Overview
Structure probing data (DMS and 2A3) for a 207-nucleotide construct. It was measured as part of the RMDB library RNAMAK. The reactions ran in a buffer of 150 mM KOAc, 10 mM MgCl2 and 150 mM bicine (pH 8.5), at 24 C.
[RMDB]
RNA sequence: GGGAACGACUCGAGUAGAGUCGAAAAUAAGUCGCUGGGAAGCACAAGAAUGCUAGUAUCGGGACCUGAAGCGCGCACGGGUUCUCUAGCGUGUACUUGGACCGGCCGGGGUGCUUCCUGUGCUGAAGCGCGCACGGCAACCGAAAGGUGCGGACAAUCACAUAAUGAACUUCGGUUCAUUAUGUGAAAAAGAAACAACAACAACAAC
Reactivity to DMS in 0.01 (KOAc 150mM, MgCl2 10mM, bicine 150mM(pH8.5), 24C), signal-to-noise 2, nucleotides 027 to 156: u000a070a170g000u000c030g050c010u000g000g000g030a090a040g020c000a030c030a100a180g020a090a140u000g020c010u000a040g040u000a100u010c140g030g030g000a050c010c000u030g000a080a060g030c020g050c000g000c020a300c020g030g020g000u000u000c010u000c010u000a070g020c030g060u000g010u010a060c070u000u000g060g000a210c070c100g000g000c060c030g020g000g020g010u000g040c040u000u000c020c000u000g000u010g010c010u010g010a000a060g020c000g020c000g010c040a300c040g060g010c020a070a030c020c000g000a090a070a130g020g020u000g000c000g000g000a070c060a140a210
Reactivity to 2A3 in 0.01 (KOAc 150mM, MgCl2 10mM, bicine 150mM(pH8.5), 24C), signal-to-noise 4, nucleotides 027 to 156: u210a060a050g040u030c020g000c010u010g000g010g000a000a000g000c020a000c020a030a030g140a130a070u180g030c010u020a030g000u140a200u300c190g020g000g010a020c000c010u030g030a190a030g000c010g010c000g000c000a010c020g030g010g010u030u030c120u010c010u050a000g030c060g010u120g040u070a150c070u060u150g070g050a110c030c060g150g110c050c030g030g000g010g010u000g010c000u000u000c000c000u010g000u000g000c000u030g020a090a030g010c010g000c000g000c020a010c010g010g000c000a010a030c020c000g020a060a010a040g000g010u030g020c030g030g040a030c060a020a100